[RMDB]
RNA sequence: GGGAACGACUCGAGUAGAGUCGAAAACCUCACAGUGCCAUCGAGAGCGUGUUAUGUAAAUUCAGUAACCCUCCUAUGGCGUAAAUGAUGCGCCACUAGCGAAAGAGAAAAGCCAAAGGGCGUAGUCCGUAAAUAUUAAGUUCGCUUAAUAUUUACGAAAAGAAACAACAACAACAAC
Reactivity to DMS in 0.01 (KOAc 150mM, MgCl2 10mM, bicine 150mM(pH8.5), 24C), signal-to-noise 7, nucleotides 027 to 126: c020c000u000c140a100c200a160g010u000g010c000c000a020u000c070g010a140g000a020g010c160g030u010g020u000u010a020u000g010u010a080a090a150u010u000c100a110g010u010a030a030c010c010c010u000c000c010u000a020u000g000g020c010g020u000a040a090a100u010g010a060u000g000c000g010c010c000a010c020u000a090g000c010g010a050a070a130g010a200g010a090a070a100a170g010c010c010a020a050a030g000g000g010c010g020u000a020g010u000c050
Reactivity to 2A3 in 0.01 (KOAc 150mM, MgCl2 10mM, bicine 150mM(pH8.5), 24C), signal-to-noise 9, nucleotides 027 to 126: c000c000u060c000a130c030a040g160u110g060c010c000a010u020c040g030a040g000a000g300c100g040u150g010u110u010a030u020g090u120a070a270a300u250u130c030a020g030u010a010a010c000c000c000u000c000c000u010a000u000g000g000c000g000u030a010a030a060u260g040a020u030g000c000g000c000c000a010c010u000a000g000c020g080a050a150a020g190a030g040a020a130a020a000g010c020c010a200a300a020g010g000g000c010g000u010a030g090u000c030
An RNA of 177 nucleotides, treated with DMS and 2A3 and read out base by base. High DMS reactivity at an A or C suggests that its Watson-Crick edge is free. The 2A3 profile rests on 14,713 reads. It was measured as part of the RMDB library RFMREP. Values cover nucleotides 27 to 126. DMS adducts were read by reverse transcription with MarathonRT. The reactions ran in a buffer of 150 mM KOAc, 10 mM MgCl2 and 150 mM bicine (pH 8.5), at 24 C.